[RMDB]
Source: RMDB library OK2TST, as collected in RNAgym. Chemical mapping of a 177-nucleotide RNA with 2A3 and DMS.
RNA sequence: GGGAACGACUCGAGUAGAGUCGAAAAACGACAGCGAGACGCAGGUGUCCGCGGUGGUGCAUCCCGGUGUGUACGUACGCUCGUUCUACUUCCAGGACCCCGAUGGGAUAACUCUGGAAUUCGCUUGUCUACGAAUAAACUUCGGUUUAUUCGUAGAAAAAGAAACAACAACAACAAC
Reactivity to 2A3 in 0.01 (KOAc 150mM, MgCl2 10mM, bicine 150mM(pH8.5), 24C), signal-to-noise 5, nucleotides 027 to 126: a000c050g080a020c030a020g000c020g040a100g050a100c050g010c130a120g090g070u090g060u070c000c030g010c010g030g030u080g060g010u050g030c020a060u040c000c020c000g010g030u060g010u010g010u020a020c050g030u010a020c040g020c060u020c020g020u040u010c020u080a140c020u050u010c000c010a010g010g020a050c020c010c020c070g210a170u290g040g010g020a040u040a060a050c030u050c010u110g040g000a040a050u060u060c040g020c050u060u100g030
Reactivity to DMS in 0.01 (KOAc 150mM, MgCl2 10mM, bicine 150mM(pH8.5), 24C), signal-to-noise 8, nucleotides 027 to 126: a070c060g010a060c070a060g000c010g000a100g010a060c080g010c120a090g010g020u000g010u000c010c030g020c030g010g030u000g010g010u000g000c150a130u000c020c010c030g010g020u000g000u000g010u010a030c110g000u010a050c080g020c080u000c060g000u000u000c030u000a110c100u000u010c010c010a030g000g000a150c060c000c000c160g020a100u010g010g010g000a060u000a060a090c070u010c010u010g000g000a040a080u010u000c060g000c100u000u000g010
Annotation
For 2A3 the reverse transcriptase was SuperScript II with manganese. High 2A3 reactivity points to a flexible backbone, as in loops and unpaired stretches. Conditions: 150 mM KOAc, 10 mM MgCl2 and 150 mM bicine (pH 8.5), 24 C.